[RMDB]
RNA sequence: GGGAACGACUCGAGUAGAGUCGAAAAGGGUGUCCCGAACAGGACGUCACCGGAGGAGCGGCGGCCGAGUACCGGCUCCGGAGAGAUUUCUGCAGCGAGGAGCUGCUGCGGGCCCAGCCUGCGGACGGAGUGAUAAUCAAUUCGUUGAUUAUCACUCAAAAGAAACAACAACAACAAC
Reactivity to 2A3 in 0.01 (KOAc 150mM, MgCl2 10mM, bicine 150mM(pH8.5), 24C), signal-to-noise 4, nucleotides 027 to 126: g090g020g010u050g030u070c010c010c010g010a080a060c070a040g030g030a010c010g020u030c020a010c060c030g010g040a020g040g070a180g080c040g060g010c010g030g050c070c050g050a060g040u070a110c040c020g060g010c020u000c000c000g000g000a030g010a000g000a030u060u190u080c040u070g000c010a020g010c010g050a090g040g090a050g090c030u040g000c010u020g050c020g000g030g000c000c040c000a020g020c000c020u060g080c040g060g020a050c050g070
Reactivity to DMS in 0.01 (KOAc 150mM, MgCl2 10mM, bicine 150mM(pH8.5), 24C), signal-to-noise 9, nucleotides 027 to 126: g010g020g020u010g010u010c010c000c030g000a140a130c220a110g010g010a060c050g010u000c020a100c030c010g000g010a070g000g000a100g020c050g010g010c080g020g010c050c050g010a170g010u000a120c090c010g000g010c020u000c020c010g000g010a080g000a100g000a100u000u000u000c020u000g010c010a020g010c020g000a150g010g000a270g010c050u000g010c020u000g010c020g010g010g000c020c060c060a120g000c030c010u000g010c040g000g010a100c230g010